Record summary:
The record gives the reactivity of an RNA of 177 nucleotides to DMS and 2A3. The data come from the RNA Mapping Database (RMDB), library OK2TRN. The RNA was probed in 150 mM KOAc, 10 mM MgCl2 and 150 mM bicine (pH 8.5) at 24 C. DMS adducts were read by reverse transcription with MarathonRT. For 2A3 the reverse transcriptase was SuperScript II with manganese.
[RMDB]
RNA sequence: GGGAACGACUCGAGUAGAGUCGAAAACAUGAUCUAGCAUGCAUGACCAUGUGCUCUGAUCCGUACUCUCCAUGUGAUGAUCGUACGUACGGUACCUAGGAUCCAUGGCGUACGACUACUCAUGCUACGCGAGUGAGCCAUUCGUGGCUCACUCGCGAAAAGAAACAACAACAACAAC
Reactivity to DMS in 0.01 (KOAc 150mM, MgCl2 10mM, bicine 150mM(pH8.5), 24C), signal-to-noise 1, nucleotides 027 to 126: c050a050u000g000a020u000c030u010a030g010c060a120u000g000c140a050u000g010a140c060c050a080u000g000u010g020c070u000c110u020g010a060u000c000c080g000u000a030c080u010c030u000c060c040a100u020g030u000g060a070u010g090a120u010c080g010u000a060c030g050u000a030c080g010g000u010a130c030c050u000a150g000g010a120u000c030c020a070u000g000g000c190g000u000a010c000g000a090c070u000a070c130u000c010a030u000g020c130u010a180
Reactivity to 2A3 in 0.01 (KOAc 150mM, MgCl2 10mM, bicine 150mM(pH8.5), 24C), signal-to-noise 2, nucleotides 027 to 126: c030a050u170g010a000u000c010u090a020g080c000a030u070g060c060a100u120g120a110c050c040a040u120g040u030g000c010u000c040u080g030a030u040c020c040g020u020a020c000u030c010u000c020c060a050u070g070u110g100a210u060g010a120u060c000g010u030a010c010g000u010a050c030g060g000u070a080c000c000u140a130g060g090a070u050c050c000a010u030g040g000c000g020u020a000c000g070a030c020u070a080c010u040c000a010u050g030c050u090a070